[RMDB]
RNA sequence: GGGAACGACUCGAGUAGAGUCGAAAAUCAACAAGAAGAUAUGAGCCUUUGACAAAAAGAUCCACCGUGAUGCCCAGUUCCAGCAGCCUGGCUGAGCCAUCUGGUUGAGCUCUUGGGAAGAUAAACUUCUCUACAUCAAUGUCAACAAGAAGAUAUAAUCCUAGUACUACUUCGGUAGUACUAGGAUAAAAGAAACAACAACAACAAC
Reactivity to 2A3 in 0.01 (KOAc 150mM, MgCl2 10mM, bicine 150mM(pH8.5), 24C), signal-to-noise 4, nucleotides 027 to 156: u050c010a010a090c010a020a040g100a050a030g000a090u080a110u190g050a040g030c010c010u050u060u070g030a040c040a010a090a010a040a000g030a040u000c020c030a020c030c030g130u050g020a020u010g000c030c000c000a010g020u190u120c010c010a020g050c030a040g060c080c010u020g000g000c010u010g000a010g060c050c010a010u000c030u030g000g010u020u010g000a020g020c020u010c000u080u030g010g010g010a000a020g010a060u150a180a100a140c010u010u000c010u000c000u040a060c020a080u090c050a060a130u070g010u020c010a010a030c030a070a040g060a060a010g040a080u090a030u130a220
Reactivity to DMS in 0.01 (KOAc 150mM, MgCl2 10mM, bicine 150mM(pH8.5), 24C), signal-to-noise 2, nucleotides 027 to 156: u000c030a070a190c110a090a130g000a130a170g010a130u000a110u010g020a170g010c020c020u000u000u010g000a150c030a090a050a090a100a130g000a040u000c010c040a040c000c000g050u000g000a080u000g000c000c000c010a120g020u000u020c030c010a070g010c070a180g050c130c020u010g000g010c030u010g010a010g000c040c040a010u010c020u020g000g000u000u020g000a040g000c030u000c040u010u000g010g000g010a070a020g030a130u010a040a080a150c010u000u000c000u000c010u000a060c060a130u000c040a060a070u000g000u000c000a060a070c060a010a090g020a060a060g020a090u010a070u020a150
Chemical mapping of a 207-nucleotide RNA with 2A3 and DMS. Source: RMDB library OK3TST, as collected in RNAgym. Conditions: 150 mM KOAc, 10 mM MgCl2 and 150 mM bicine (pH 8.5), 24 C. Values are in units of 0.01, from 0 to 300, in steps of 10. The 2A3 profile rests on 2,824 reads.